Chemical mapping of a 207-nucleotide RNA with 2A3.
Source: RMDB library M2RFPK, as collected in RNAgym.
2A3 adducts were read by reverse transcription with SuperScript II with manganese.

[RMDB]
RNA sequence: GGGAACGACUCGAGUAGAGUCGAAAAAACUCAGCUAGGAAGAGUAUAACAUUCAUGUUGACGAGACCUAGACGAAACACAGAGGAAAAUUAUUAAUCACUGGAUAGUAUUAGUAAUGACUCUGUGUAAAACUCUUCUACGUUCGCGUAGAAGAGAACACAGGAAUUCGGUUCGCCGAAUUCCUGUGAAAAGAAACAACAACAACAAC
Reactivity to 2A3 in 0.01 (KOAc 150mM, MgCl2 10mM, bicine 150mM(pH8.5), 24C), signal-to-noise 2, nucleotides 027 to 156: a010a000c010u010c010a010g010c000u000a000g000g040a040a070g040a150g110u190a180u070a240a050c050a020u150u230c090a130u210g000u020u040g010a020c040g000a000g070a070c000c000u000a000g030a060c010g010a020a080a000c000a000c000a000g010a010g000g060a190a080a040a000u000u010a010u000u010a000a000u040c050a010c020u050g150g070a160u280a300g000u020a000u000u000a000g010u000a000a020u020g020a000c000u060c000u000g000u000g000u000a010a010a010a010c010u000c000u010u000c000u030a000c000g000u020u120c260g010c010g060u010a000g020a000a000g000a000g030a020a000